[RMDB]
RNA sequence: GGGAACGACUCGAGUAGAGUCGAAAAGAUAUGGAGGGAGGUAUGAACUACAGGGACCGUAUCGGAAACGAUAUUAGUACCUGCAUACCGAAGAACUCCUAAGUCAAAACCGCUGUUCGCAGCGGAAGGUGAAUAAAUUCUUCGGAAUUUAUUCACCAAAAGAAACAACAACAACAAC
Reactivity to DMS in 0.01 (KOAc 150mM, MgCl2 10mM, bicine 150mM(pH8.5), 24C), signal-to-noise 3, nucleotides 027 to 126: g020a040u000a300u000g010g000a030g000g010g010a060g020g000u000a010u000g000a090a080c050u020a300c010a000g000g010g020a070c250c190g000u000a010u000c010g030g000a060a110a200c000g000a010u010a000u000u000a020g000u010a110c000c010u000g000c000a010u000a010c000c000g000a060a060g000a170a140c010u000c000c000u000a020a060g000u000c050a090a050a130a140c010c000g020c000u000g000u010u010c150g020c010a030g010c000g020g010a000a010
Reactivity to 2A3 in 0.01 (KOAc 150mM, MgCl2 10mM, bicine 150mM(pH8.5), 24C), signal-to-noise 3, nucleotides 027 to 126: g020a020u100a020u170g000g010a020g040g010g010a060g020g020u010a010u030g040a110a060c080u210a050c300a000g020g020g020a010c010c030g000u000a010u000c000g020g050a060a050a050c020g010a000u010a010u040u090a020g010u000a000c000c000u000g060c000a000u010a010c010c020g130a060a060g010a030a020c000u000c000c000u010a060a030g080u040c040a000a010a110a160c010c010g000c000u000g040u080u120c300g020c130a000g000c010g000g000a020a040